[RMDB]
RNA sequence: GGGAACGACUCGAGUAGAGUCGAAAAGCCAGAUCUGCAGGGUCAGCAGUGUGGAUGUGAAACCCUCCAAGACAGGGGCAGAGGAGGAAUCCAUAGAGACAGCUUGAGGCUGAGCUGAACCCAUGAAGUGGAGGUUGCAGCCUGUAAGGUCAGGUCAAUUCUAGGUUUAAUUCGUUAAACCUAGAAUAAAAGAAACAACAACAACAAC
Reactivity to 2A3 in 0.01 (KOAc 150mM, MgCl2 10mM, bicine 150mM(pH8.5), 24C), signal-to-noise 3, nucleotides 027 to 156: g050c010c020a030g030a070u010c010u060g000c020a030g040g000g040u100c030a030g030c060a070g020u020g040u050g080g090a100u080g040u060g120a060a020a030c010c010c000u020c010c000a090a040g080a100c060a050g050g000g020g000c030a010g020a060g060g010a010g010g010a040a030u000c020c000a010u050a090g080a010g010a040c010a020g030c020u070u140g040a030g030g140c020u020g020a010g030c010u010g030a090a070c010c010c030a080u100g080a110a040g050u050g010g020a030g010g010u070u080g000c010a020g030c000c000u010g020u040a080a050g030g010u040c020a010g020g000u040c020a010
Reactivity to DMS in 0.01 (KOAc 150mM, MgCl2 10mM, bicine 150mM(pH8.5), 24C), signal-to-noise 3, nucleotides 027 to 156: g010c010c010a100g020a080u000c010u000g030c030a080g010g020g040u010c040a120g070c040a140g010u010g050u000g020g000a100u010g010u020g010a090a050a100c060c040c000u000c000c010a060a180g020a270c090a070g010g030g020g010c080a070g000a220g000g000a090g000g010a110a130u000c010c010a100u000a140g020a210g000a140c000a020g000c030u000u000g010a120g020g000c050u040g000a090g020c020u000g020a060a080c020c000c010a100u010g030a080a170g000u000g000g020a140g020g010u000u000g010c020a110g010c000c020u000g020u010a060a080g030g010u000c010a080g020g010u000c060a090